The record gives the reactivity of an RNA of 207 nucleotides to 2A3. It was measured as part of the RMDB library M2RFPK. Values cover nucleotides 27 to 156.
[RMDB]
RNA sequence: GGGAACGACUCGAGUAGAGUCGAAAAAGAGCCGGAUACGUCCGGCUCAACGGGGGAUACGUGUGGUGCCGUCCGCUCCGCCUAUGGCAUAACAAAUGCACCACACACUAGGCUACGGCCUAGUGAAAAAAGGUGUAUGUGUUCGCACAUACACCAAGUCUGGUUGAUAGUUCGCUAUCAACCAGACAAAAGAAACAACAACAACAAC
Reactivity to 2A3 in 0.01 (KOAc 150mM, MgCl2 10mM, bicine 150mM(pH8.5), 24C), signal-to-noise 2, nucleotides 027 to 156: a000g000a000g000c000c000g000g000a010u000a020c190g080u020c000c030g010g000c000u000c000a000a000c010g010g020g010g010g000a010u030a100c040g010u010g000u000g000g000u000g030c050c040g010u020c040c090g090c060u050c040c050g030c000c020u210a240u260g100g000c050a120u100a150a060c050a090a060a020u070g000c000a000c010c000a010c000a000c000a000c000u000a000g000g010c000u030a010c230g150g000c000c000u000a000g000u010g010a090a000a000a000a000a000g000g000u000g000u010a010u000g030u000g040u040u030c140g020c130a000c000a000u000a000c000a000c000c000a000a000